An RNA of 207 nucleotides, treated with 2A3 and DMS and read out base by base. For DMS the reverse transcriptase was MarathonRT. Source: RMDB library OK3TST, as collected in RNAgym. The RNA was probed in 150 mM KOAc, 10 mM MgCl2 and 150 mM bicine (pH 8.5) at 24 C.

RNA sequence: GGGAACGACUCGAGUAGAGUCGAAAAUUUUCCGUUUACAAGAAAGUAAGCGAUCCAGAUGCUGCGACGGAGAACAUCAGUAGGGUGGGCAGGUUAUGACGAUCAUAGGUAUCGACUACGGUACUACGUUUUCGACGUGCAGUAUAGUCACGUCUACCUAUCUUACUUCAUUCGUGAAGUAAGAUAGAAAAGAAACAACAACAACAAC
Reactivity to 2A3 in 0.01 (KOAc 150mM, MgCl2 10mM, bicine 150mM(pH8.5), 24C), signal-to-noise 6, nucleotides 027 to 156: u090u050u040u040c010c000g000u030u040u050a070c050a040a070g120a220a120a020g120u090a020a020g000c020g030a060u050c060c050a030g040a130u080g010c040u020g010c030g060a010c030g040g000a040g020a060a020c020a070u140c040a030g050u080a060g040g020g060u060g030g020g000c040a040g050g020u070u080a100u140g050a030c040g030a040u080c050a080u140a090g060g000u020a000u050c020g070a100c110u190a080c080g010g000u000a020c010u020a020c050g020u060u020u020u140c030g000a000c000g000u000g000c020a020g060u120a110u160a210g080u180c010a000c020g010u000c010u010a010c010
Reactivity to DMS in 0.01 (KOAc 150mM, MgCl2 10mM, bicine 150mM(pH8.5), 24C), signal-to-noise 3, nucleotides 027 to 156: u000u000u000u010c020c020g030u010u000u000a140c100a130a110g030a140a120a190g040u010a070a100g040c050g010a120u000c050c060a140g030a100u010g000c050u000g000c040g010a100c030g050g010a110g000a070a030c030a060u000c030a090g030u000a090g020g000g030u000g000g020g040c040a040g010g000u000u000a030u000g000a070c040g020a070u000c050a050u010a080g000g010u000a050u000c020g020a120c090u000a090c050g020g020u000a050c040u000a060c060g010u020u010u010u010c040g010a030c010g040u000g030c040a180g030u000a160u000a070g000u010c010a060c030g020u000c000u000a060c110